[RMDB]
RNA sequence: GGGAACGACUCGAGUAGAGUCGAAAAAUGACGCCAGAUGCUCAAUCCAAGCACCACAGUUAGGAUUGUGCUUUUCCUCAUCAAGUCGUGAAAUGAGGUCACGAAGCUCUCAGAGUGUGGUGUUUACUGUCUCGUCAAUGUUCGCAUUGACGAGACAAAAAGAAACAACAACAACAAC
Reactivity to DMS in 0.01 (KOAc 150mM, MgCl2 10mM, bicine 150mM(pH8.5), 24C), signal-to-noise 2, nucleotides 027 to 126: a060u000g020a070c150g020c030c080a120g000a110u000g000c060u000c040a020a030u000c090c080a110a110g010c030a030c030c050a050c030a040g010u000u020a040g010g000a030u000u020g000u000g010c060u010u000u000u000c030c010u020c000a050u010c030a180a100g030u020c060g030u000g000a040a060a040u000g020a040g000g020u000c140a130c160g010a110a070g000c080u000c020u000c030a160g000a080g000u000g010u000g000g000u000g000u000u010u010a060c190
Reactivity to 2A3 in 0.01 (KOAc 150mM, MgCl2 10mM, bicine 150mM(pH8.5), 24C), signal-to-noise 1, nucleotides 027 to 126: a000u100g020a010c070g000c040c020a030g040a090u100g000c030u020c050a000a080u040c000c030a080a000g010c000a010c010c000a030c020a030g080u050u040a040g070g010a090u020u100g010u020g030c060u020u010u010u020c000c000u020c000a030u030c000a070a000g130u120c050g050u050g110a070a000a000u040g000a030g040g000u050c020a040c180g020a030a010g000c000u000c000u020c030a060g050a020g130u030g000u010g000g040u000g040u050u060u000a030c040
Record summary: The data come from the RNA Mapping Database (RMDB), library OK2TRN. Structure probing data (DMS and 2A3) for a 177-nucleotide construct. Reactivities are given for positions 27 through 126. For DMS, 1,251 sequencing reads were counted. For 2A3 the reverse transcriptase was SuperScript II with manganese. For DMS the reverse transcriptase was MarathonRT.